[RMDB]
RNA sequence: GGGAACGACUCGAGUAGAGUCGAAAAGAACGCCACUUCGGUGGCGUUCGAAGAUCUACCACACGUAGAUCACUAUCGUGUGAGACAUCGAAAGAUGUCAAAUGGUCCGGAAGUUCGCUUCCGGAAAUUCCCUCUUACCAUUCGUGGUAAGAGGGAAAAAAGAAACAACAACAACAAC
Reactivity to DMS in 0.01 (KOAc 150mM, MgCl2 10mM, bicine 150mM(pH8.5), 24C), signal-to-noise 4, nucleotides 027 to 126: g000a000a010c010g000c000c000a010c030u000u010c200g050g010u000g000g000c000g010u000u000c000g010a090a110g000a080u000c010u000a070c080c030a040c060a040c070g010u010a040g010a120u020c300a070c100u000a010u000c050g040u000g010u000g010a300g010a010c000a000u000c000g010a120a110a180g000a010u000g000u000c010a050a060a070u000g000g000u000c000c000g000g000a010a010g010u000u010c240g010c000u000u000c000c000g000g000a000a050a060
Reactivity to 2A3 in 0.01 (KOAc 150mM, MgCl2 10mM, bicine 150mM(pH8.5), 24C), signal-to-noise 1, nucleotides 027 to 126: g010a020a000c010g000c010c030a020c000u000u100c280g130g000u000g030g000c020g020u000u010c000g000a000a000g010a030u040c030u060a130c010c030a020c000a000c110g010u020a010g010a130u120c030a070c120u080a020u220c060g030u020g010u000g010a200g000a020c010a010u010c000g010a010a040a010g010a020u010g010u000c010a020a040a000u090g050g010u020c010c010g000g000a000a000g030u020u100c170g030c140u000u030c000c020g000g000a020a000a000